[RMDB]
RNA sequence: GGGAACGACUCGAGUAGAGUCGAAAAUACCUUGAGUAUUGCUGAAUUCAGUUUAGCGUGCAUGCUCUUGGCUAUUCUCAUAGUGAUUGUCAGAUUUGGAGUUACUUAUUCGUCAAUUCAAUAUUUAAAAAGGUGCCGAUGUUCGCAUCGGCACCAAUCACUUCUAGUAGUUCGCUACUAGAAGUGAAAAAGAAACAACAACAACAAC
Reactivity to DMS in 0.01 (KOAc 150mM, MgCl2 10mM, bicine 150mM(pH8.5), 24C), signal-to-noise 1, nucleotides 027 to 156: u000a040c000c000u010u010g010a020g020u000a020u010u010g000c030u010g000a070a080u010u000c200a190g040u000u000u000a050g060c060g020u000g020c060a170u010g020c000u010c020u000u000g040g010c050u020a090u010u000c000u010c000a180u010a100g030u000g000a080u000u010g010u000c040a160g010a190u000u000u000g000g020a160g000u000u000a080c060u000u000a100u000u000c070g040u010c050a050a090u010u000c050a010a080u010a110u000u000u030a030a050a040a160a210g020g070u010g000c060c020g040a060u010g030u000u000c300g010c010a040u000c010g000g000c010a010c010c000a010a050
Reactivity to 2A3 in 0.01 (KOAc 150mM, MgCl2 10mM, bicine 150mM(pH8.5), 24C), signal-to-noise 3, nucleotides 027 to 156: u100a000c000c000u000u030g000a000g000u020a080u210u100g000c020u020g050a140a130u200u200c120a130g150u100u100u120a060g040c080g010u060g010c010a000u030g010c000u020c000u020u000g020g000c010u040a060u060u010c010u010c010a040u160a040g120u100g050a040u000u030g040u060c090a080g050a080u030u080u120g040g040a120g110u080u120a100c010u040u080a040u080u050c030g020u010c020a020a030u050u020c020a040a040u070a170u160u170u280a180a160a090a030a060g010g000u000g010c010c000g000a000u010g030u070u080c170g000c080a000u010c020g000g000c000a000c000c010a000a000
The data come from the RNA Mapping Database (RMDB), library M2RFPK. This 207-nucleotide RNA was probed chemically with DMS and 2A3. The 2A3 profile rests on 1,368 reads. Conditions: 150 mM KOAc, 10 mM MgCl2 and 150 mM bicine (pH 8.5), 24 C. For DMS, 2,366 sequencing reads were counted. 2A3 adducts were read by reverse transcription with SuperScript II with manganese. Values cover nucleotides 27 to 156.